Notes: The data come from the RNA Mapping Database (RMDB), library PDB130. Chemical mapping of a 207-nucleotide RNA with 2A3 and DMS. For 2A3 the reverse transcriptase was SuperScript II with manganese. For 2A3, 2,395 sequencing reads were counted.
RNA sequence: GGGAACGACUCGAGUAGAGUCGAAAAAUUACCGAAGCUUUGGAUUGAUAUUUUAUCAAUGGUAGGAGAGCGUUCUUAACCGCAAUGAAGGUAUACCGUGAGGAGUGCUGGAGCGUUAAGAAGUGAGAAUGCCGGUAUGAGUAGCGCAAGAUAAGUGGAAGAUAACAAAGUUCGCUUUGUUAUCUUCAAAAGAAACAACAACAACAAC
Reactivity to 2A3 in 0.01 (KOAc 150mM, MgCl2 10mM, bicine 150mM(pH8.5), 24C), signal-to-noise 4, nucleotides 027 to 156: a000u050u020a030c020c000g030a060a020g020c070u230u190u200g050g060a020u000u030g020a030u040a080u120u150u140u140a080u060c010a030a040u050g040g040u040a050g010g060a020g000a000g010c020g030u040u000c010u010u030a020a020c080c060g000c040a070a300u070g010a040a030g010g000u010a030u040a040c030c020g010u020g030a030g010g020a060g040u050g020c020u010g000g020a010g010c010g000u000u010a020a020g010a010a020g040u040g040a060g040a070a030u110g010c030c020g010g000u050a040u060g030a010g030u080a020g020c030g010c030a030a030g040a100u110a130a030g030u080g100
Reactivity to DMS in 0.01 (KOAc 150mM, MgCl2 10mM, bicine 150mM(pH8.5), 24C), signal-to-noise 2, nucleotides 027 to 156: a070u000u000a070c030c030g000a060a150g000c040u000u000u010g010g000a080u000u000g000a060u000a070u010u000u010u010a070u000c010a030a050u000g020g010u000a080g020g000a130g010a090g020c040g010u000u010c010u010u000a070a070c030c040g090c000a110a080u000g010a150a130g000g020u000a060u000a140c000c030g020u010g000a130g050g010a300g040u000g000c020u000g000g010a020g000c030g010u000u010a020a070g020a030a120g000u000g030a050g010a050a100u000g010c000c030g010g000u010a070u010g000a060g010u000a050g030c050g040c070a040a050g000a060u000a030a120g000u000g000